[RMDB]
Structure probing data (2A3 and DMS) for a 170-nucleotide construct. Source: RMDB library 15KLIB, as collected in RNAgym. Reactivities are given for positions 27 through 129. For DMS, 49,104 sequencing reads were counted.

RNA sequence: GGGAACGACUCGAGUAGAGUCGAAAAUGUUCUUCCCUUAUGACAUCGAACUUGUCACAGGAAAGCAAAAUAUUCUCCUGCGCAAGUAUGGCCGUGGUGGUUAUCACUACACCCCAUUCCACUAUGAUAGGUACUUGGUUCGCCAAGUACAAAAGAAACAACAACAACAAC
Reactivity to 2A3 in 0.01 (KOAc 150mM, MgCl2 10mM, bicine 150mM(pH8.5), 24C), signal-to-noise 9, nucleotides 027 to 129: u190g040u070u050c020u030u020c010c000c000u010u120a200u090g080a030c020a070u090c110g050a040a060c020u040u030g090u140c030a000c000a070g010g010a060a060a030g090c150a100a060a110a060u220a160u110u070c070u010c020c000u000g000c020g000c020a000a020g010u030a090u070g060g000c040c020g020u020g010g020u030g010g050u090u070a110u170c030a010c070u090a030c030a050c020c000c000c010a020u090u030c030c010a070c060u080a060u140g080a110u080a100g070
Reactivity to DMS in 0.01 (KOAc 150mM, MgCl2 10mM, bicine 150mM(pH8.5), 24C), signal-to-noise 9, nucleotides 027 to 129: u040g000u020u020c070u020u020c000c010c020u040u040a070u030g030a060c090a030u000c150g030a070a040c080u020u010g000u040c040a060c090a000g020g010a000a050a060g050c250a090a080a120a100u040a060u000u060c100u010c030c030u000g020c140g050c010a020a030g000u010a060u030g000g000c090c040g040u030g000g030u000g000g000u040u030a100u060c070a100c040u000a030c060a140c000c030c010c020a060u030u010c040c050a100c060u030a080u050g040a010u030a000g030